[RMDB]
RNA sequence: GGGAACGACUCGAGUAGAGUCGAAAACACAAAAAGCUGAUGCUGCCGGAGAGGUCAUCCGUCAGUAUUUCAGGAGUAAAUUCGACAUUAUUCAGAAAGACGACCUCAGUCCAGUAAACAAACAAAACAUUAGCACUGCAUUCGUGCAGUGCUAAUGAAAAGAAACAACAACAACAAC
Reactivity to DMS in 0.01 (KOAc 150mM, MgCl2 10mM, bicine 150mM(pH8.5), 24C), signal-to-noise 2, nucleotides 027 to 126: c060a050c090a050a100a050a170a070g020c000u000g030a040u000g010c010u000g040c030c000g030g000a020g050a220g040g020u040c060a150u000c020c040g000u020c000a040g020u000a040u020u060u010c000a050g010g000a050g010u020a050a130a150u000u010c030g000a010c030a090u000u000a060u000u000c020a090g010a010a140a150g000a110c070g050a080c010c010u000c070a070g000u010c000c030a120g000u040a070a110a030c190a050a080a120c230a100a000a090a140
Reactivity to 2A3 in 0.01 (KOAc 150mM, MgCl2 10mM, bicine 150mM(pH8.5), 24C), signal-to-noise 6, nucleotides 027 to 126: c120a000c060a010a130a020a030a020g120c010u000g000a000u000g000c010u000g000c030c000g040g010a040g010a020g070g230u130c040a160u020c010c010g000u000c000a000g000u010a030u010u100u060c020a010g020g070a020g050u100a020a100a100u060u030c020g020a010c030a060u090u070a070u110u080c020a030g140a090a110a010g050a070c040g060a070c010c000u060c020a010g030u030c040c020a020g060u090a030a120a100c110a030a100a010c040a040a120a030a000